[RMDB]
RNA sequence: GGGAACGACUCGAGUAGAGUCGAAAAGAUAUGGAAUCCCUAAGGGAGUCGGCCAUUCGGAAACGAAUGGUCGACGAGGAUCUUACAUGGGAUUCCUAAGUCAAAAGACGAUGCUUCGGCAUCGUCAUCACGUAAGUAUCUUCGGAUACUUACGUGAAAAAGAAACAACAACAACAAC
Reactivity to DMS in 0.01 (KOAc 150mM, MgCl2 10mM, bicine 150mM(pH8.5), 24C), signal-to-noise 4, nucleotides 027 to 126: g000a020u000a220u010g000g000a020a000u000c000c010c010u010a030a030g010g000g010a020g010u000c010g020g000c000c010a000u000u010c000g010g000a060a030a130c000g010a010a000u000g010g000u000c000g010a000c000g010a060g010g010a070u010c030u000u000a060c300a190u010g000g010g010a020u000u000c000c000u000a000a070g000u000c020a120a100a150a150g000a010c010g000a010u000g010c000u000u010c250g030g000c000a000u000c000g000u000c000a030
Reactivity to 2A3 in 0.01 (KOAc 150mM, MgCl2 10mM, bicine 150mM(pH8.5), 24C), signal-to-noise 2, nucleotides 027 to 126: g000a010u040a030u100g000g010a000a010u000c020c000c000u010a020a010g040g020g000a110g020u000c010g000g000c000c000a010u000u010c000g010g010a040a020a030c000g000a020a000u000g000g040u000c000g000a000c010g010a000g000g020a020u000c010u010u070a110c090a300u250g000g000g000a000u000u000c000c000u020a050a000g010u000c010a080a030a100a150g010a000c010g000a000u000g000c020u070u140c300g160g000c010a000u000c010g000u000c000a000
The data come from the RNA Mapping Database (RMDB), library TTRDES. Chemical mapping of a 177-nucleotide RNA with DMS and 2A3. 2A3 adducts were read by reverse transcription with SuperScript II with manganese. Reactivities are given for positions 27 through 126. For DMS, 6,952 sequencing reads were counted. Conditions: 150 mM KOAc, 10 mM MgCl2 and 150 mM bicine (pH 8.5), 24 C. For DMS the reverse transcriptase was MarathonRT.